[RMDB]
RNA sequence: GGGAACGACUCGAGUAGAGUCGAAAAACGUAGGCCAUGCUUACGAGCAUGGCCUAUGACGAAUCUCAAGCAAUCAAGCAUUCUACUUCUAUUGCAACACUGAGGAGCUUACGAGCUCCUCAGUGAAAAAAGAGAGUAAUGUUCGCAUUACUCUCAAUCCUUAAUAAUGCUUCGGCAUUAUUAAGGAAAAAGAAACAACAACAACAAC
Reactivity to 2A3 in 0.01 (KOAc 150mM, MgCl2 10mM, bicine 150mM(pH8.5), 24C), signal-to-noise 2, nucleotides 027 to 156: a000c000g000u000a000g000g020c010c000a010u000g000c000u180u090a110c260g030a050g000c000a020u010g000g050c000c000u000a000u000g010a000c010g100a050a070u010c010u020c040a050a020g010c000a010a050u110c030a070a000g020c030a120u140u070c110u150a080c040u100u060c040u100a070u040u040g020c030a060a030c000a070c000u000g010a000g000g010a000g010c000u090u050a090c260g030a030g000c000u010c000c000u030c000a000g000u000g010a010a010a000a000a010a000g000a000g000a000g010u000a000a000u000g030u020u030c130g010c150a000u000u000a000c010u000c000u000c000a000a000
Reactivity to DMS in 0.01 (KOAc 150mM, MgCl2 10mM, bicine 150mM(pH8.5), 24C), signal-to-noise 2, nucleotides 027 to 156: a100c030g030u000a000g000g040c030c000a000u010g000c020u000u000a150c300g010a090g030c010a010u000g000g060c000c000u000a000u000g050a160c060g030a110a110u000c020u000c020a120a140g000c050a040a070u000c150a140a060g000c080a110u010u000c080u010a050c020u000u000c060u000a110u010u000g010c000a060a180c010a030c000u030g010a040g040g000a040g030c000u000u010a160c200g030a050g050c010u000c000c010u000c010a010g000u000g000a000a020a100a100a070a040g000a000g020a050g010u000a010a000u000g020u000u000c300g050c010a010u010u000a010c000u000c010u010c000a000a020
An RNA of 207 nucleotides, treated with 2A3 and DMS and read out base by base.
The 2A3 profile rests on 1,345 reads.
The data come from the RNA Mapping Database (RMDB), library M2RFPK.
For DMS the reverse transcriptase was MarathonRT.
Values cover nucleotides 27 to 156.
2A3 is a SHAPE reagent: it acylates the 2'-hydroxyl of flexible nucleotides of all four kinds.